[RMDB]
RNA sequence: GGGAACGACUCGAGUAGAGUCGAAAACGUUCGGUGCUGUUGCCUAUGUCCUGCUGGAUCGUCGUGAAGGCGGAACAGAUCCCGACUGCAUGUGUUACCUUCGUGGAGUCCGGCGCGACUCGUUCGACGAUCCCACUGCAUUCGUGCAGUGGGAUCGAAAAGAAACAACAACAACAAC
Reactivity to 2A3 in 0.01 (KOAc 150mM, MgCl2 10mM, bicine 150mM(pH8.5), 24C), signal-to-noise 2, nucleotides 027 to 126: c020g010u050u000c040g000g040u000g100c070u030g020u090u050g040c000c030u070a090u150g060u030c000c030u020g030c000u000g020g010a120u030c090g080u020c020g000u120g200a130a070g010g000c020g000g010a020a000c000a020g000a030u050c000c000c020g050a060c020u100g020c060a100u080g050u020g050u120u100a040c010c000u030u100c070g000u040g020g010a000g060u000c020c000g010g050c040g030c080g000a020c010u040c010g140u100u060c000g020a000